RNA sequence: GGGAACGACUCGAGUAGAGUCGAAAAAAGCUAUUCUAUGGCUCAUCAUGUCUGAAUGGCUGAGAUAGUCAAUGUGUGUCACAGGGACUGGAGGCCUACCCUGCUUGGACAAUAUAAGGGCCACUAACUAAGUAAAUCUCUUCGGAGAUUUACUUAGAAAAGAAACAACAACAACAAC
Reactivity to 2A3 in 0.01 (KOAc 150mM, MgCl2 10mM, bicine 150mM(pH8.5), 24C), signal-to-noise 5, nucleotides 027 to 126: a000a000g110c120u160a150u150u050c060u090a140u170g000g010c020u000c020a090u040c010a040u090g020u010c020u010g080a130a100u130g010g000c010u020g000a010g010a060u250a040g020u020c020a030a040u020g030u010g040u060g180u210c030a000c010a020g020g000g010a020c010u030g010g040a030g040g010c000c000u020a040c020c000c000u020g020c030u030u040g030g000a010c010a040a010u130a010u040a240a150g010g000g010c000c000a010c010u030a040a050
Reactivity to DMS in 0.01 (KOAc 150mM, MgCl2 10mM, bicine 150mM(pH8.5), 24C), signal-to-noise 6, nucleotides 027 to 126: a170a040g000c020u010a040u010u000c100u010a160u010g010g000c010u010c050a090u010c300a090u000g010u000c020u000g000a040a070u010g010g000c000u000g010a110g020a100u010a020g010u000c020a030a030u000g000u000g010u020g000u010c050a030c020a020g000g000g000a040c030u010g030g030a300g000g000c000c010u000a100c010c000c000u000g000c050u000u000g010g000a040c030a040a080u010a110u010a110a050g000g000g010c010c010a060c210u010a070a180

Source information
This 177-nucleotide RNA was probed chemically with 2A3 and DMS. The RNA was probed in 150 mM KOAc, 10 mM MgCl2 and 150 mM bicine (pH 8.5) at 24 C. For 2A3, 6,821 sequencing reads were counted. It was measured as part of the RMDB library OK2TRN. The DMS profile rests on 10,097 reads.